The record gives the reactivity of an RNA of 177 nucleotides to DMS. In probing experiments dimethyl sulfate is read out at A N1 and C N3, which are open when not base-paired. It was measured as part of the RMDB library OK2TST.

[RMDB]
RNA sequence: GGGAACGACUCGAGUAGAGUCGAAAAAUAAUGGCACUCGAUGCGUGCGAAGGCGAUUGCAUACUGAUCCUCGCCGAAAGCAUCGACGCGGGCCGGAUCAGGCAGAAGCGAGAUCACGGAGCCUUCAAUUAAUCCCAGCUUUCGAGCUGGGAUUAAUAAAAGAAACAACAACAACAAC
Reactivity to DMS in 0.01 (KOAc 150mM, MgCl2 10mM, bicine 150mM(pH8.5), 24C), signal-to-noise 2, nucleotides 027 to 126: a100u020a080a050u040g000g000c020a130c040u000c020g000a010u000g010c000g000u000g010c110g000a100a060g010g020c020g020a150u000u030g000c100a160u010a180c140u000g000a070u000c070c030u000c060g010c000c000g000a060a140a290g000c010a020u000c030g010a100c190g000c160g000g010g020c000c090g040g000a020u030c100a040g000g030c060a040g000a120a090g020c000g010a140g050a070u000c010a070c050g000g000a230g000c010c010u000u010c010a170
The RNA was probed in 150 mM KOAc, 10 mM MgCl2 and 150 mM bicine (pH 8.5) at 24 C. Reactivities are given for positions 27 through 126.